This 177-nucleotide RNA was probed chemically with 2A3.
Conditions: 150 mM KOAc, 10 mM MgCl2 and 150 mM bicine (pH 8.5), 24 C.
It was measured as part of the RMDB library RFM100.
[RMDB]
RNA sequence: GGGAACGACUCGAGUAGAGUCGAAAACUUACAGAGCUUAUUGGCAUUCUGUCCACCUCCUUUAUCAAUAGAACAAUUUCUCUCUUUUAUUUUCCCUGUCAUAUAUGCAUAUUUACAUAUUUAUAUGCGACCGAUUACUUUUCGAAGUAAUCGGUCGAAAAGAAACAACAACAACAAC
Reactivity to 2A3 in 0.01 (KOAc 150mM, MgCl2 10mM, bicine 150mM(pH8.5), 24C), signal-to-noise 3, nucleotides 027 to 126: c000u020u050a030c030a030g000a000g030c020u110u090a100u290u200g020g010c010a040u060u080c000u020g040u000c020c020a010c000c000u050c010c000u050u170u040a150u130c040a050a110u180a140g130a070a090c110a060a100u030u080u020c020u000c000u020c020u050u020u070u020a110u020u080u040u020c000c000c000u040g070u140c130a000u060a000u000a010u270g020c000a010u000a070u130u110u070a050c010a040u060a050u090u140u030a110u030a020u040g050